An RNA of 207 nucleotides, treated with DMS and 2A3 and read out base by base. Reactivities are rounded to 0.1 and cut off at 0 and 3. For 2A3 the reverse transcriptase was SuperScript II with manganese. The RNA was probed in 150 mM KOAc, 10 mM MgCl2 and 150 mM bicine (pH 8.5) at 24 C. For DMS, 1,764 sequencing reads were counted. Values cover nucleotides 27 to 156.
RNA sequence: GGGAACGACUCGAGUAGAGUCGAAAAUAGCCACAGUGAAACAUGCCAGAAGGGAGGUGCUCCCUUCCUGGACACCAAAUAUCCCAGGUAACCAAACAGCCCCACUAAGCUGUUUGCAAACUUCCUCUACCUUUGUUUUCUGGCUGUUCAGAAUUAAAAUGAUUAAAUACUUCGGUAUUUAAUCAUUAAAAGAAACAACAACAACAAC
Reactivity to DMS in 0.01 (KOAc 150mM, MgCl2 10mM, bicine 150mM(pH8.5), 24C), signal-to-noise 1, nucleotides 027 to 156: u000a110g020c040c040a110c080a110g020u000g000a150a060a080c070a030u000g000c030c000a080g010a050a030g000g030g010a050g010g000u010g000c100u000c010c000c040u000u000c060c030u010g000g040a110c040a070c010c050a130a080a300u010a210u000c020c010c000a080g030g020u000a060a150c220c030a030a010a020c000a060g030c000c020c040c300a070c220u000a060a150g010c000u000g010u010u000u010g000c000a060a040a050c050u000u000c020c030u000c220u000a030c040c030u010u000u000g010u000u000u010u010c030u010g020g000c030u020g030u000u000c020a110g030a100a170u000u020a050a160
Reactivity to 2A3 in 0.01 (KOAc 150mM, MgCl2 10mM, bicine 150mM(pH8.5), 24C), signal-to-noise 1, nucleotides 027 to 156: u080a020g030c010c010a050c040a040g110u070g080a080a000a020c020a040u200g000c000c000a000g000a020a030g010g000g040a010g010g040u070g060c140u080c010c000c000u020u030c000c000u010g000g000a030c020a010c010c020a130a190a000u180a050u070c030c020c000a000g060g010u000a040a030c040c000a040a000a000c000a010g000c010c040c000c020a070c100u070a120a000g000c000u000g010u000u030u000g000c040a080a050a220c050u220u160c000c010u120c050u040a100c010c030u150u200u170g110u120u160u030u000c000u000g000g000c000u000g020u050u060c020a010g050a150a010u300u300a200a080